[RMDB]
RNA sequence: GGGAACGACUCGAGUAGAGUCGAAAAGCGGGUCCUGCGCUGCAACACGGCCGCGCCCAUGUGGCUCAACGGCACGCACCCAUCCAGCGACGAGGGCAUCGUGGACCGCACAGCCUGCGCGCACUGGCUCAACGACUAAGUUCGCUUAGUCGUUGAGAAAAGAAACAACAACAACAAC
Reactivity to DMS in 0.01 (KOAc 150mM, MgCl2 10mM, bicine 150mM(pH8.5), 24C), signal-to-noise 3, nucleotides 027 to 126: g000c040g000g000g020u000c030c050u000g020c100g000c080u000g000c070a050a060c080a160c120g000g000c040c040g040c110g000c050c000c080a110u000g000u000g000g010c000u000c080a110a110c170g010g000c010a090c080g030c000a150c040c030c020a120u010c090c060a050g010c040g000a080c050g020a160g020g010g000c040a050u000c140g040u000g000g010a150c070c070g000c050a050c080a120g000c010c010u000g020c020g020c070g000c050a110c050u020g000g000
Reactivity to 2A3 in 0.01 (KOAc 150mM, MgCl2 10mM, bicine 150mM(pH8.5), 24C), signal-to-noise 3, nucleotides 027 to 126: g030c030g000g020g060u040c010c020u010g010c050g010c020u050g010c040a110a070c030a050c110g070g000c030c030g060c040g010c020c020c010a090u150g070u100g040g000c010u000c080a120a010c010g030g030c040a010c080g040c040a070c000c020c000a050u070c030c010a000g030c000g090a130c040g040a130g010g020g020c020a110u130c140g040u060g000g110a300c080c050g060c030a020c010a040g020c000c000u090g000c070g000c000g010c000a070c050u030g040g020

The record gives the reactivity of an RNA of 177 nucleotides to DMS and 2A3. The reactions ran in a buffer of 150 mM KOAc, 10 mM MgCl2 and 150 mM bicine (pH 8.5), at 24 C. Source: RMDB library OK2TRN, as collected in RNAgym. 2A3 adducts were read by reverse transcription with SuperScript II with manganese.